An RNA of 177 nucleotides, treated with DMS and 2A3 and read out base by base. 2A3 adducts were read by reverse transcription with SuperScript II with manganese. The DMS profile rests on 4,295 reads. Conditions: 150 mM KOAc, 10 mM MgCl2 and 150 mM bicine (pH 8.5), 24 C. For 2A3, 4,738 sequencing reads were counted.
RNA sequence: GGGAACGACUCGAGUAGAGUCGAAAAGGGUGGCGCCGGAUCACCAGAACACCAAGCGGGUCACGCGACUAUUUGACCGGAUCGCCGGUCAUCGCCGCUUCCGGUUCUAUCUCAACGUCGAGAUCGGUACUAUGACCACAUUCGUGUGGUCAUAGUAAAAAGAAACAACAACAACAAC
Reactivity to DMS in 0.01 (KOAc 150mM, MgCl2 10mM, bicine 150mM(pH8.5), 24C), signal-to-noise 5, nucleotides 027 to 126: g000g010g020u000g020g010c070g020c030c020g010g010a060u000c040a060c020c030a140g010a080a100c100a110c070c080a090a090g010c060g000g010g000u010c060a180c210g000c080g000a020c070u000a110u000u000u000g010a010c000c000g000g000a180u010c300g000c030c000g010g010u000c030a020u000c190g000c020c000g000c030u000u000c040c030g000g010u000u010c060u010a030u000c020u000c010a080a170c200g010u010c100g000a040g010a060u000c070g000g010
Reactivity to 2A3 in 0.01 (KOAc 150mM, MgCl2 10mM, bicine 150mM(pH8.5), 24C), signal-to-noise 3, nucleotides 027 to 126: g090g000g000u010g000g010c040g000c030c000g030g000a050u020c000a010c010c010a040g070a140a030c080a020c080c010a040a010g030c040g060g000g010u060c050a030c130g120c060g060a040c030u110a110u160u080u080g010a010c010c030g000g030a190u230c140g120c260c000g000g000u000c000a020u010c010g000c010c000g020c000u030u030c030c000g000g000u000u040c010u030a030u020c010u010c010a100a210c150g190u150c070g060a010g000a040u040c020g000g010